[RMDB]
RNA sequence: GGGAACGACUCGAGUAGAGUCGAAAAGAACCGCGAUUCGUCGCGGUUCGAGCGCCGUAGCGCGCAACGGGGUAACGGCAGCAUUAGCGCGCAGCUGCCGACGAUCGGGUGGUUUCGACCACCCGAAACGUGGAAGCGAUUUCGAUCGCUUCCACGUAAAAGAAACAACAACAACAAC
Reactivity to DMS in 0.01 (KOAc 150mM, MgCl2 10mM, bicine 150mM(pH8.5), 24C), signal-to-noise 1, nucleotides 027 to 126: g000a030a010c010c010g070c000g010a020u000u010c170g050u000c010g030c000g000g010u020u000c010g000a120g010c050g000c010c080g050u080a070g010c070g010c000g010c020a050a040c140g000g000g000g000u020a090a130c060g010g010c000a030g010c020a150u000u010a070g010c060g020c040g030c060a090g000c010u000g000c000c000g000a050c260g000a140u000c000g000g000g050u000g000g000u000u000u000c180g010a030c000c000a010c000c000c000g000a000a020